Notes
The record gives the reactivity of an RNA of 177 nucleotides to 2A3 and DMS. For 2A3, 3,886 sequencing reads were counted. For DMS, 2,183 sequencing reads were counted. Conditions: 150 mM KOAc, 10 mM MgCl2 and 150 mM bicine (pH 8.5), 24 C.
RNA sequence: GGGAACGACUCGAGUAGAGUCGAAAAUGGGUCCCGAAUCUCUGAACUAUCACGUUCGUGGGAGGCAAACCGCUAGGGAUCUUUUCCACUGCGAUUUAAUGUCGACAACUUCGUACCCUUUUUAUAGCGUGAGUAUGAUGUUCGCAUCAUACUCACGAAAAGAAACAACAACAACAAC
Reactivity to 2A3 in 0.01 (KOAc 150mM, MgCl2 10mM, bicine 150mM(pH8.5), 24C), signal-to-noise 4, nucleotides 027 to 126: u110g000g000g000u000c000c000c000g020a060a080u030c000u020c030u040g020a010a000c010u060a210u300c100a020c190g000u000u020c060g030u150g000g000g020a010g010g010c040a090a150a260c100c110g000c050u040a030g000g000g000a010u000c000u020u020u020u010c030c020a070c070u090g020c010g030a020u050u060u250a170a070u200g040u080c020g030a110c020a070a040c040u080u040c040g050u080a090c030c000c000u040u060u040u070u080a250u190a090g090
Reactivity to DMS in 0.01 (KOAc 150mM, MgCl2 10mM, bicine 150mM(pH8.5), 24C), signal-to-noise 3, nucleotides 027 to 126: u010g000g010g000u010c000c010c000g000a090a170u010c000u000c010u010g000a030a030c020u010a150u010c230a090c210g020u010u000c030g000u000g000g000g020a030g010g010c030a100a140a140c260c140g010c040u000a120g000g020g010a020u010c010u000u000u000u000c010c010a070c250u000g000c030g010a030u000u000u000a120a090u020g000u000c040g010a070c110a050a060c060u000u000c080g010u000a090c050c020c000u010u020u020u020u010a100u010a130g000